[RMDB]
RNA sequence: GGGAACGACUCGAGUAGAGUCGAAAAUAGAGGAGACCGAAGCGAGGAGGAAAGCAAAGAAAGCAACGGGGCUAGCCGACGGAUGUUCCGCCUCCCGAGAGGGGACGAGUGAGGCUUAUCCCGGGGACAAAUUUACCAGGUUCGCCUGGUAAAUUUGAAAAGAAACAACAACAACAAC
Reactivity to DMS in 0.01 (KOAc 150mM, MgCl2 10mM, bicine 150mM(pH8.5), 24C), signal-to-noise 1, nucleotides 027 to 126: u010a090g000a090g020g020a050g010a150c090c020g020a080a130g040c090g010a030g000g000a070g000g010a030a080a090g010c130a040a050a070g040a090a070a210g000c070a110a080c130g000g000g020g020c170u000a060g000c010c010g020a130c150g010g000a170u010g000u000u010c110c020g010c000c040u010c000c040c050g000a180g010a130g030g000g030g010a010c050g010a050g000u010g000a200g000g010c040u000u000a040u000c010c000c010g000g000g000g000a200

This 177-nucleotide RNA was probed chemically with DMS. The RNA was probed in 150 mM KOAc, 10 mM MgCl2 and 150 mM bicine (pH 8.5) at 24 C. Values cover nucleotides 27 to 126. DMS adducts were read by reverse transcription with MarathonRT. The data come from the RNA Mapping Database (RMDB), library VIROID.